[RMDB]
RNA sequence: GGGAACGACUCGAGUAGAGUCGAAAACUGUGGUGAGCCCCUAUCUAGUAUAGCAAUCCACCAAGCAGGUGAUUUCACACAAUUCAGGUUCUCAAAGAAAAUGCGCCCUGACUUGACAGGUAUGGUCAUAUCGCAUGGAGUUCGCUCCAUGCGAUAUAAAAGAAACAACAACAACAAC
Reactivity to DMS in 0.01 (KOAc 150mM, MgCl2 10mM, bicine 150mM(pH8.5), 24C), signal-to-noise 2, nucleotides 027 to 126: c000u030g030u020g030g070u000g000a070g010c050c110c190c020u000a030u000c040u100a090g000u030a030u000a070g020c070a030a060u010c000c030a100c030c020a090a040g030c150a060g000g010u030g000a070u000u000u000c040a100c070a030c100a010a070u010u020c050a150g000g020u020u020c050u030c030a050a110a060g000a040a060a050a100u030g040c060g010c160c030c020u000g020a060c040u000u000g010a060c000a000g000g000u030a000u070g000g070u030c090
Reactivity to 2A3 in 0.01 (KOAc 150mM, MgCl2 10mM, bicine 150mM(pH8.5), 24C), signal-to-noise 3, nucleotides 027 to 126: c030u050g000u020g060g030u030g060a030g020c000c010c000c000u000a050u010c020u060a020g100u070a050u040a040g060c020a000a050u010c070c000a000c010c000a050a010g040c020a010g000g110u090g040a150u020u050u180c050a130c000a010c020a070a070u070u070c070a010g060g000u070u010c010u000c000a110a110a050g080a020a130a010a030u040g010c020g020c000c010c000u070g040a090c070u030u060g030a000c020a040g040g080u110a040u120g070g030u030c030